[RMDB]
RNA sequence: GGGAACGACUCGAGUAGAGUCGAAAAGAAAUGGUAUGUGAGACUACCGGUCUACUAGCUCGAACUGUGAUAAAUUCACUGUGAAAAGAGCCGACGCUCACCGUCGGUGAGUGAAGAAAGAAAGAAACCCAACUAUUUAGUUCGCUAAAUAGUUGGGAAAAGAAACAACAACAACAAC
Reactivity to DMS in 0.01 (KOAc 150mM, MgCl2 10mM, bicine 150mM(pH8.5), 24C), signal-to-noise 7, nucleotides 027 to 126: g000a060a070a060u030g010g000u000a000u000g000u020g000a140g010a160c130u000a020c020c020g010g010u040c040u020a120c090u010a100g020c010u000c010g000a090a050c030u010g000u010g000a020u010a070a110a150u040u000c000a000c010u000g010u000g000a060a080a100a130g000a060g010c010c040g000a170c030g000c070u010c050a020c040c000g040u030c160g000g030u000g000a000g010u000g010a080a170g010a100a070a100g010a090a080a120g010a080a100a100
Reactivity to 2A3 in 0.01 (KOAc 150mM, MgCl2 10mM, bicine 150mM(pH8.5), 24C), signal-to-noise 5, nucleotides 027 to 126: g080a020a150a020u170g010g000u070a080u080g110u070g050a040g010a040c040u010a050c000c050g040g020u040c050u100a150c020u050a020g010c000u000c000g020a070a040c010u050g020u000g040a030u080a200a210a080u210u010c010a010c000u020g010u050g130a130a040a060a060g030a020g000c000c010g020a020c000g000c010u010c000a030c040c000g230u180c160g000g000u010g000a010g020u050g010a000a040g040a040a090a010g100a020a070a040g110a060a010a020
The data come from the RNA Mapping Database (RMDB), library OK1LIB. This 177-nucleotide RNA was probed chemically with DMS and 2A3. For DMS, 16,277 sequencing reads were counted. The RNA was probed in 150 mM KOAc, 10 mM MgCl2 and 150 mM bicine (pH 8.5) at 24 C.